[RMDB]
RNA sequence: GGGAACGACUCGAGUAGAGUCGAAAACACACUUCCCGGGAAGUGUGGCCUAACCCCGGUUAGGGACCGCUCCAGGCACAGCUAGCAGGAAGAGACUGGGAGCCCUGACUGGCGGGAUGGAUCGUAUGAUCAGCUGCCAGACAGAUCUAGCGUGCAACGCCCUUUUACGUUUCGACGUAAAAGGGCGAAAAGAAACAACAACAACAAC
Reactivity to 2A3 in 0.01 (KOAc 150mM, MgCl2 10mM, bicine 150mM(pH8.5), 24C), signal-to-noise 1, nucleotides 027 to 156: c000a010c000a010c000u000u080c060c140c000g140g220g000a010a000g000u000g000u000g010g000c000c000u060a010a000c040c030c000c010g100g000u000u140a040g020g000g080a030c000c050g010c000u000c000c000a040g090g070c020a010c040a000g000c020u010a000g030c050a070g000g070a120a020g070a010g040a140c010u040g010g010g010a010g000c050c000c000u020g010a030c000u000g000g000c060g030g000g040a130u100g290g000a000u000c040g070u300a080u300g010a000u000c010a010g030c000u010g000c000c000a000g010a080c000a000g010a000u040c000u000a000g000c000g040u020g000c030a120a000